[RMDB]
RNA sequence: GGGAACGACUCGAGUAGAGUCGAAAAUAGGAGUACCCAGAGAAGUCCUUUCGGAUGUCAUUGUGGACUUCGGAACAAUACUGACUAUAUUGGGCUUAGAGAGCGGAUAUGCAGUAUCUAUUGCUAAGUAAUGAACGUCAUUCGUGACGUUCAUUACAAAAGAAACAACAACAACAAC
Reactivity to 2A3 in 0.01 (KOAc 150mM, MgCl2 10mM, bicine 150mM(pH8.5), 24C), signal-to-noise 6, nucleotides 027 to 126: u220a060g020g050a050g040u110a120c000c000c000a000g000a010g000a040a010g020u010c030c000u120u140u270c090g110g170a150u160g130u160c060a100u090u270g100u090g040g000a010c000u020u000c000g000g020a050a020c040a080a010u010a070c010u030g140a080c020u070a020u010a030u110u050g140g150g040c010u060u100a040g020a020g010a000g230c030g030g000a010u010a000u070g010c010a000g030u040a040u030c040u040a130u080u130g100c070u100a090a030
Reactivity to DMS in 0.01 (KOAc 150mM, MgCl2 10mM, bicine 150mM(pH8.5), 24C), signal-to-noise 3, nucleotides 027 to 126: u040a060g000g000a060g020u020a130c000c000c050a110g000a110g000a000a030g010u000c010c010u000u030u000c110g040g010a050u010g000u000c080a130u000u000g010u020g010g020a040c010u010u000c010g010g030a130a130c250a120a040u000a000c010u000g000a070c060u020a080u000a050u020u000g000g010g020c020u000u010a140g000a130g000a070g020c020g000g020a030u010a030u000g000c000a020g000u010a030u030c060u030a080u000u010g010c100u030a070a220
This 177-nucleotide RNA was probed chemically with 2A3 and DMS. For 2A3, 3,825 sequencing reads were counted. The DMS profile rests on 5,570 reads. The RNA was probed in 150 mM KOAc, 10 mM MgCl2 and 150 mM bicine (pH 8.5) at 24 C. 2A3 adducts were read by reverse transcription with SuperScript II with manganese.